[RMDB]
RNA sequence: GGGAACGACUCGAGUAGAGUCGAAAAUGUGGCCGGAUUAACGACUCCGGGUAAGGUAACAGCGUCGGUAGAUGAAGCUUCCCUGACCGGAGGCUGAAAUGGAUCAUCCGCAGCCAAGUCCCUCCUCAGACGCUUUCAAGGUGUCUGGCGGGAUGCUUCGUGGUAUAACCUUCGGGUUAUACCACGAAAAAGAAACAACAACAACAAC
Reactivity to 2A3 in 0.01 (KOAc 150mM, MgCl2 10mM, bicine 150mM(pH8.5), 24C), signal-to-noise 1, nucleotides 027 to 156: u130g000u020g000g000c020c000g020g000a020u060u000a120a050c030g010a000c040u000c030c000g060g020g000u080a020a000g010g010u000a100a090c010a060g030c010g030u020c020g080g050u220a120g130a190u210g020a170a000g000c000u050u010c000c000c010u000g130a000c000c000g000g000a010g000g000c030u110g210a030a070a100u090g070g010a070u090c000a000u000c010c010g080c110a030g020c000c000a000a000g030u010c010c000c030u020c020c000u020c010a000g000a010c010g000c050u000u270u120c300a110a050g000g010u010g030u060c000u030g000g040c040g010g000g000a060u130g000c010u010